[RMDB]
RNA sequence: GGGAACGACUCGAGUAGAGUCGAAAACACGGCCAGUGCGGUGGUGGCCGGUGCUGCGACUGCUUCCACCGCAGUCGCGACGGCGGCAACGACAGCAGGCACCGCAACCGUUGCCGCCGCAGCCACCGUAUCACAACAGGUUCGCCUGUUGUGAUACAAAAGAAACAACAACAACAAC
Reactivity to DMS in 0.01 (KOAc 150mM, MgCl2 10mM, bicine 150mM(pH8.5), 24C), signal-to-noise 5, nucleotides 027 to 126: c060a150c070g010g010c020c020a030g020u010g000c000g000g040u000g010g020u000g000g000c020c010g020g000u020g010c090u000g020c010g010a030c000u000g000c010u010u010c190c170a120c290c160g000c010a010g010u000c020g020c000g010a060c020g010g010c000g010g000c000a010a010c000g000a120c240a110g020c120a100g010g010c080a060c070c050g010c020a100a090c150c030g010u000u000g010c000c000g010c000c000g010c060a040g000c030c010a040c030c040
Reactivity to 2A3 in 0.01 (KOAc 150mM, MgCl2 10mM, bicine 150mM(pH8.5), 24C), signal-to-noise 2, nucleotides 027 to 126: c060a010c020g010g020c000c000a030g010u030g090c010g000g010u020g020g030u010g000g000c020c020g030g020u060g010c040u090g000c010g000a010c000u010g010c000u300u020c060c060a100c010c040g010c010a000g000u000c000g000c030g010a030c020g000g000c000g000g000c000a010a000c000g090a060c060a060g140c060a060g150g040c030a010c010c030g000c020a050a060c120c000g000u020u000g000c010c010g010c000c000g010c000a000g000c000c020a040c030c040
Conditions: 150 mM KOAc, 10 mM MgCl2 and 150 mM bicine (pH 8.5), 24 C. The record gives the reactivity of an RNA of 177 nucleotides to DMS and 2A3. The 2A3 profile rests on 7,421 reads. DMS adducts were read by reverse transcription with MarathonRT. The DMS profile rests on 5,686 reads.